Structure probing data (2A3 and DMS) for a 207-nucleotide construct. 2A3 adducts were read by reverse transcription with SuperScript II with manganese. Source: RMDB library M2RFPK, as collected in RNAgym.
[RMDB]
RNA sequence: GGGAACGACUCGAGUAGAGUCGAAAACGACUCAAUACGUCCCCGUCGUACAGAAUGGUAACAUAUCUCUCCAAAUAUGUGAGCUUGGGUAUACGGGGAAACCCAACCCCUUGGGAAGAUUGGGUAUAAAAGGAGCGAUCCUUCGGGAUCGCUCCAAUCAAAUUAACGUGUUCGCACGUUAAUUUGAAAAAGAAACAACAACAACAAC
Reactivity to 2A3 in 0.01 (KOAc 150mM, MgCl2 10mM, bicine 150mM(pH8.5), 24C), signal-to-noise 2, nucleotides 027 to 156: c090g030a010c020u000c020a020a030u100a190c050g040u010c010c010c000c000g050u080c020g010u010a020c010a040g210a140a160u080g050g010u020a040a010c000a020u030a070u020c060u020c040u000c170c010a040a190a070u030a020u000g020u030g010a050g070c000u080u100g130g010g010u020a020u000a000c010g000g000g000g000a000a040a020c010c000c000a020a050c000c000c000c030u050u100g020g000g020a030a070g020a090u000u000g000g010g050u060a060u110a120a100a030a060g000g000a000g000c000g010a010u000c010c010u000u050c170g080g010g010a000u000c010g000c000u000c000c000a000a000
Reactivity to DMS in 0.01 (KOAc 150mM, MgCl2 10mM, bicine 150mM(pH8.5), 24C), signal-to-noise 1, nucleotides 027 to 156: c060g010a100c030u010c010a130a080u010a060c020g000u000c010c010c010c000g000u020c060g110u000a080c040a100g010a130a160u000g030g040u000a150a020c020a010u000a020u010c020u000c110u000c220c120a070a030a050u010a010u000g000u000g000a110g000c050u000u000g020g010g030u000a010u000a050c060g000g020g010g000a050a130a030c010c000c010a030a090c020c000c020c040u000u020g030g010g010a170a060g010a120u000u010g000g000g010u000a070u000a030a040a130a260g010g030a030g030c030g000a040u000c010c030u020u020c300g100g020g050a010u000c000g050c010u000c000c000a000a030